[RMDB]
RNA sequence: GGGAACGACUCGAGUAGAGUCGAAAAGUGGUGGGCACCUGUAAUCCCAACUACGCUGGAGGCUGAGGCAGGAGAAUCACUUGAACCCAGGAGGCGGAAGUUGCAGUGAGCCAAGAUCGCACCAUUGCACUCCAACCUGGGUGACAAGAGCAAAACACAUUAUCACGAGGUUCGCCUCGUGAUAAUGAAAAGAAACAACAACAACAAC
Reactivity to DMS in 0.01 (KOAc 150mM, MgCl2 10mM, bicine 150mM(pH8.5), 24C), signal-to-noise 1, nucleotides 027 to 156: g050u000g020g020u000g000g000g030c030a040c030c030u000g000u000a020a090u000c000c030c010a050a120c020u010a030c020g000c040u000g000g030a140g040g030c020u020g000a070g020g050c020a040g000g030a090g010a050a080u010c030a090c020u000u000g020a130a040c000c000c010a050g010g010a130g020g020c130g020g000a020a080g040u000u000g020c000a040g020u010g030a120g010c010c010a020a300g000a050u000c060g020c000a050c000c000a030u020u000g000c000a030c010u000c000c000a080a090c030c010u000g020g000g000u000g020a030c020a060a110g030a040g020c070a060a040a060a050c060a140
Reactivity to 2A3 in 0.01 (KOAc 150mM, MgCl2 10mM, bicine 150mM(pH8.5), 24C), signal-to-noise 3, nucleotides 027 to 156: g050u020g020g010u030g020g050g010c040a050c050c050u080g050u070a030a090u050c000c000c040a030a030c050u140a040c060g080c080u040g010g040a040g000g000c030u060g010a000g020g020c040a020g020g040a060g050a020a080u080c040a010c120u000u000g000a000a010c020c000c000a000g010g020a040g060g170c160g000g050a090a040g080u240u010g000c000a000g000u010g030a020g010c030c080a110a050g100a170u230c090g000c020a050c060c000a010u000u000g000c000a010c000u000c000c010a050a080c020c000u030g000g000g000u020g000a000c000a010a000g000a010g060c080a000a050a090a010c070a010

Description
Conditions: 150 mM KOAc, 10 mM MgCl2 and 150 mM bicine (pH 8.5), 24 C. This 207-nucleotide RNA was probed chemically with DMS and 2A3. It was measured as part of the RMDB library OK3TST. For 2A3 the reverse transcriptase was SuperScript II with manganese. High 2A3 reactivity points to a flexible backbone, as in loops and unpaired stretches. For 2A3, 1,970 sequencing reads were counted.